[RMDB]
Conditions: 150 mM KOAc, 10 mM MgCl2 and 150 mM bicine (pH 8.5), 24 C.
The record gives the reactivity of an RNA of 207 nucleotides to 2A3.
RNA sequence: GGGAACGACUCGAGUAGAGUCGAAAACGCUGGGAUGUGGCUAGGAAACCAUAGGGAGCUGAAGCGCGCACGGCGAAGAACUAUGGGAGUACUAGCACAUCCUGUGCUGAAGCGCGCACGGCAACCGAAAGGUGCGACAGGCCGAUUCGUCGGCCAACAUCACCAUAUCCUUCGGGAUAUGGUGAUGAAAAGAAACAACAACAACAAC
Reactivity to 2A3 in 0.01 (KOAc 150mM, MgCl2 10mM, bicine 150mM(pH8.5), 24C), signal-to-noise 2, nucleotides 027 to 156: c040g000c010u060g010g000g000a000u010g040u060g170g120c000u020a000g030g010a030a010a000c000c000a010u000a010g010g010g010a020g020c010u030g040a240a050g050c030g010c000g000c020a020c030g020g020c010g100a140a010g000a000a030c000u000a000u000g010g010g000a000g010u000a000c000u000a000g020c000a010c000a000u000c000c000u000g010u010g000c020u040g000a120a030g000c000g000c010g010c010a030c030g040g000c020a120a000c020c000g070a130a030a020g050g020u040g030c040g060a060c130a100g010g000c010c020g000a000u010u120c220g030u000c000g120g010c010c010a010a010